RNA sequence: GGGAACGACUCGAGUAGAGUCGAAAAAAAGAUAUGGAGGGACUGGAGAGCAGCAUGGCUAAGACAGACAAUCGGAAACGAUUGUUCGAGCCAUGCGGGCUCGAUGAAAGUCCCUCCUAAGUCAAAACCAAUUGGUGUUGUUCGCAACACCAAUUGGAAAAGAAACAACAACAACAAC
Reactivity to DMS in 0.01 (KOAc 150mM, MgCl2 10mM, bicine 150mM(pH8.5), 24C), signal-to-noise 1, nucleotides 027 to 126: a040a070a070g010a110u010a300u010g000g010a010g030g000g020a020c010u000g000g000a150g000a040g060c000a130g010c040a060u000g000g000c000u050a100a150g010a300c300a200g040a010c000a020a000u000c000g000g000a110a110a210c010g020a000u000u010g000u000u020c000g000a020g040c000c000a010u000g000c000g000g000g000c020u000c020g020a090u020g000a070a210a060g000u010c000c000c000u000c000c000u000a000a070g000u010c010a080a060a110a060